RNA sequence: GGGAACGACUCGAGUAGAGUCGAAAACAAUCAACAAUAUGGUUUGUGUAGUUAUGCUGAAAAUCGGUGAGGUUGUAUGGAAUAGGUUAACCGUAAGACCUUAAGUUGAAAAACUUUAAAAUUAAUCAAAAUCAUGUACACUUCGGUGUACAUGAAACGUAUACCAUACCUUCGGGUAUGGUAUACGAAAAGAAACAACAACAACAAC
Reactivity to 2A3 in 0.01 (KOAc 150mM, MgCl2 10mM, bicine 150mM(pH8.5), 24C), signal-to-noise 3, nucleotides 027 to 156: c030a010a080u170c030a020a090c040a050a130u090a100u190g040g030u010u050u020g010u020g020u020a050g030u060u060a050u120g030c050u050g060a050a060a030a050u070c050g010g030u040g020a030g010g020u020u030g020u030a080u050g040g000a070a100u040a080g010g010u030u030a040a050c020c020g020u020a040a050g040a010c000c000u030u020a040a010g010u000u000g050a080a040a010a030a020c020u130u130u120a050a040a050a060u180u210a060a040u110c020a030a080a000a170u030c000a000u000g000u000a000c000a000c010u020u080c180g070g000u000g010u000a000c000a000u000g000a000a000a000
Reactivity to DMS in 0.01 (KOAc 150mM, MgCl2 10mM, bicine 150mM(pH8.5), 24C), signal-to-noise 2, nucleotides 027 to 156: c030a120a170u000c040a020a170c030a110a110u000a120u000g020g000u000u000u000g020u010g010u000a060g010u000u000a070u000g000c000u000g000a070a050a040a070u000c090g050g020u010g010a070g010g030u000u000g020u000a100u000g000g020a110a100u000a050g030g000u000u000a020a220c000c000g010u020a100a170g010a060c010c000u000u000a000a090g000u020u000g000a150a090a160a050a060c060u000u000u000a030a030a010a130u000u020a080a140u010c040a040a090a090a160u000c000a000u000g000u000a010c000a020c000u010u020c300g050g000u000g000u000a010c010a010u000g010a010a030a060

Annotation:
The record gives the reactivity of an RNA of 207 nucleotides to 2A3 and DMS. The RNA was probed in 150 mM KOAc, 10 mM MgCl2 and 150 mM bicine (pH 8.5) at 24 C. DMS adducts were read by reverse transcription with MarathonRT. For DMS, 3,127 sequencing reads were counted. The data come from the RNA Mapping Database (RMDB), library M2RFPK.